[RMDB]
RNA sequence: GGGAACGACUCGAGUAGAGUCGAAAACGUCCAGCCAUUGACCAUCGUCGAGGGGUUUGCUCUGUUAUCCGUGCCGAGCAGCUUUGUCCAAAACGAAAUCGAGCGCCAUCUGCGGGCCCCGAUUACCACUACGUCCACAUUUCGAUGUGGACGUAGUAAAAGAAACAACAACAACAAC
Reactivity to DMS in 0.01 (KOAc 150mM, MgCl2 10mM, bicine 150mM(pH8.5), 24C), signal-to-noise 3, nucleotides 027 to 126: c140g010u000c040c030a100g000c060c030a050u050u000g020a060c060c010a040u000c080g000u010c040g010a180g000g000g000g000u000u030u010g020c000u000c040u000g010u010u030a100u000c020c060g010u010g020c080c050g000a030g000c040a100g000c000u030u010u000g000u030c030c060a080a090a090a140c130g000a090a050a120u040c030g000a040g050c120g000c030c020a020u010c080u030g000c040g000g010g000c000c010c040c040g000a060u020u030a090c160c050
Reactivity to 2A3 in 0.01 (KOAc 150mM, MgCl2 10mM, bicine 150mM(pH8.5), 24C), signal-to-noise 5, nucleotides 027 to 126: c040g080u030c000c000a010g040c010c000a100u070u100g040a060c010c020a080u090c040g060u020c010g030a040g030g040g010g000u050u180u110g000c020u040c020u050g050u080u140a110u090c060c030g050u060g010c030c020g030a000g010c020a000g000c040u040u090u150g120u000c010c010a040a080a050a020c050g060a020a060a050u050c030g020a030g070c050g020c020c010a100u080c060u160g010c070g010g030g010c000c010c010c000g030a040u020u110a060c040c020